This 207-nucleotide RNA was probed chemically with DMS and 2A3. It was measured as part of the RMDB library OK3TST. For 2A3, 1,078 sequencing reads were counted. The RNA was probed in 150 mM KOAc, 10 mM MgCl2 and 150 mM bicine (pH 8.5) at 24 C. For 2A3 the reverse transcriptase was SuperScript II with manganese.
RNA sequence: GGGAACGACUCGAGUAGAGUCGAAAAUCAUUAACCUUUGUUUCGCCCCAUAUAUAUACACGAUAUCCUUUGCUUGAAUUAGCGAAUAUGAAAUGGUUAAGUCAAGCCAUCCAAGCAAGAAACUGAAAUAGUCAAUUUGAUACGCUUAAAUGAAGAACUCGUAUACGCUAUUCGUAGCGUAUACGAGAAAAGAAACAACAACAACAAC
Reactivity to DMS in 0.01 (KOAc 150mM, MgCl2 10mM, bicine 150mM(pH8.5), 24C), signal-to-noise 1, nucleotides 027 to 156: u000c060a100u000u000a150a130c020c060u020u000u000g000u020u000u010c070g020c070c000c000c050a090u000a050u000a180u020a150u000a070c070a150c050g020a110u000a120u000c020c020u000u000u000g050c000u000u020g000a020a010u000u000a010g010c000g000a050a100u000a170u000g020a090a060a060u000g020g040u000u000a090a180g020u010c020a000a300g000c040c060a040u020c040c000a030a080g020c020a030a070g000a020a040a200c030u010g030a040a030a090u010a080g030u010c000a060a110u010u000u010g010a170u000a070c060g000c020u010u010a110a020a050u000g020a110a150g000a110a240
Reactivity to 2A3 in 0.01 (KOAc 150mM, MgCl2 10mM, bicine 150mM(pH8.5), 24C), signal-to-noise 2, nucleotides 027 to 156: u080c010a010u090u160a140a130c000c000u050u060u050g010u000u070u020c050g020c000c020c000c020a000u040a000u000a000u020a000u020a070c060a010c110g060a030u040a020u130c010c010u100u040u010g010c030u000u010g020a030a060u050u040a060g040c050g050a000a020u170a080u130g100a010a090a020u010g090g000u100u060a140a060g100u140c030a090a000g000c000c000a010u020c010c000a000a000g000c000a000a030g020a110a100a000c040u050g050a040a120a030u040a050g050u060c010a040a150u040u060u120g020a020u050a030c020g010c020u150u120a100a190a090u220g060a040a110g110a050a010